[RMDB]
RNA sequence: GGGAACGACUCGAGUAGAGUCGAAAAGAUAUGGAUUGAGUGUGGCUGAUGACCUCGGAAACGAGCAAGGCCCACUUCAAUCCUAAGUCAAAAGUGUCUCAUAAGUGUUCGCACUUAUGAGACACAACUUACAACACUCGUUCGCGAGUGUUGUAAGAAAAGAAACAACAACAACAAC
Reactivity to 2A3 in 0.01 (KOAc 150mM, MgCl2 10mM, bicine 150mM(pH8.5), 24C), signal-to-noise 3, nucleotides 027 to 126: g030a010u060a040u130g010g000a010u010u000g000a010g020u030g030u300g020g000c010u010g020a300u200g030a170c010c020u000c020g020g030a070a070a030c010g000a010g010c000a070a120g020g000c000c000c020a010c010u040u050c000a010a000u010c000c000u010a060a020g040u020c020a000a010a050a180g020u010g000u000c000u000c000a000u000a000a000g010u010g060u130u240c300g050c150a000c000u020u000a000u000g020a030g000a000c000a000c000a000a000
Reactivity to DMS in 0.01 (KOAc 150mM, MgCl2 10mM, bicine 150mM(pH8.5), 24C), signal-to-noise 4, nucleotides 027 to 126: g000a030u000a300u010g000g010a020u000u000g020a010g010u000g010u010g050g030c000u000g000a090u020g000a050c300c000u010c000g020g000a110a090a160c010g000a000g000c010a070a150g000g010c000c000c010a010c010u000u000c010a000a020u000c000c000u000a010a100g000u000c040a050a030a090a080g000u000g010u000c000u000c000a010u000a000a010g010u000g000u000u000c230g040c020a020c000u010u000a000u000g010a010g000a000c000a000c000a000a070